[RMDB]
RNA sequence: GGGAACGACUCGAGUAGAGUCGAAAAGAUAUGGAUGUCGUAUUUCCGCAGAUACUCGGAAACGAGAGUAGGAGGAUACGAGCAUCCUAAGUCAAAACUACUGCUAUCGUUCGCGAUAGCAGUAGAACCUCUGCUUAAGGUUCGCCUUAAGCAGAGGAAAAGAAACAACAACAACAAC
Reactivity to DMS in 0.01 (KOAc 150mM, MgCl2 10mM, bicine 150mM(pH8.5), 24C), signal-to-noise 3, nucleotides 027 to 126: g000a070u010a300u010g000g010a010u000g040u000c000g020u000a030u000u000u000c000c000g000c160a200g020a040u000a020c000u010c020g000g010a070a120a280c030g000a000g010a110g000u000a050g010g010a030g010g000a020u000a010c000g000a090g030c000a010u000c000c000u010a030a070g010u000c040a120a050a070a160c000u000a000c000u000g000c000u000a000u010c000g010u000u020c230g030c000g010a030u000a020g000c010a000g000u000a000g000a070a180
Reactivity to 2A3 in 0.01 (KOAc 150mM, MgCl2 10mM, bicine 150mM(pH8.5), 24C), signal-to-noise 2, nucleotides 027 to 126: g030a010u050a030u190g010g000a010u020g000u040c000g000u000a000u000u050u000c000c000g000c070a010g030a060u050a040c000u000c020g040g030a050a100a090c020g010a010g010a020g040u040a160g020g010a010g010g020a000u000a010c010g010a050g040c000a010u000c000c000u000a080a010g040u030c050a000a010a140a150c010u020a000c010u000g000c000u010a010u000c010g040u130u090c300g010c030g170a000u000a010g050c000a000g000u000a000g000a000a010

Chemical mapping of a 177-nucleotide RNA with DMS and 2A3.
The RNA was probed in 150 mM KOAc, 10 mM MgCl2 and 150 mM bicine (pH 8.5) at 24 C.
As a SHAPE reagent, 2A3 marks flexible, mostly unpaired nucleotides at the ribose 2'-OH.
For DMS the reverse transcriptase was MarathonRT.
Values cover nucleotides 27 to 126.